[RMDB]
RNA sequence: GGGAACGACUCGAGUAGAGUCGAAAAAUUGAGGAAAUGGGUGAUCCGCAGCCAAAUCCUAAGGACAUUUUAUUGUCUAUGGAUGCAGUUCACAGGCCAGAUGGCAAUGGGUAUCCUAGUGGGAUAUCAUUUCAAUCGGGUUCGCCCGAUUGAAAUGAAAAGAAACAACAACAACAAC
Reactivity to 2A3 in 0.01 (KOAc 150mM, MgCl2 10mM, bicine 150mM(pH8.5), 24C), signal-to-noise 2, nucleotides 027 to 126: a000u070u140g020a030g030g120a000a000a140u150g080g020g000u050g020a030u030c030c030g000c030a020g050c000c000a000a020a110u090c000c000u020a030a020g110g030a000c020a030u010u060u070u300a110u210u070g000u020c000u020a030u070g020g000a000u020g040c030a000g060u080u190c000a010c030a060g130g000c010c010a020g020a120u140g040g000c000a010a080u020g000g000g070u030a020u000c000c010u010a040g120u050g050g010g000a000u020a030u070
Reactivity to DMS in 0.01 (KOAc 150mM, MgCl2 10mM, bicine 150mM(pH8.5), 24C), signal-to-noise 3, nucleotides 027 to 126: a150u030u030g010a100g000g010a020a140a060u040g000g000g040u000g000a030u010c020c040g000c010a110g030c060c100a050a150a100u000c040c050u000a070a130g000g010a000c010a020u000u060u010u020a050u010u000g010u000c000u000a300u010g000g000a040u000g000c080a120g010u010u020c080a080c080a080g000g020c000c030a100g010a190u030g000g000c020a070a030u010g010g000g000u010a020u000c020c010u000a100g010u010g000g010g000a020u000a030u000
Structure probing data (2A3 and DMS) for a 177-nucleotide construct. The RNA was probed in 150 mM KOAc, 10 mM MgCl2 and 150 mM bicine (pH 8.5) at 24 C. The 2A3 profile rests on 999 reads. DMS adducts were read by reverse transcription with MarathonRT. Source: RMDB libraries RFM100 and RFMREP, as collected in RNAgym.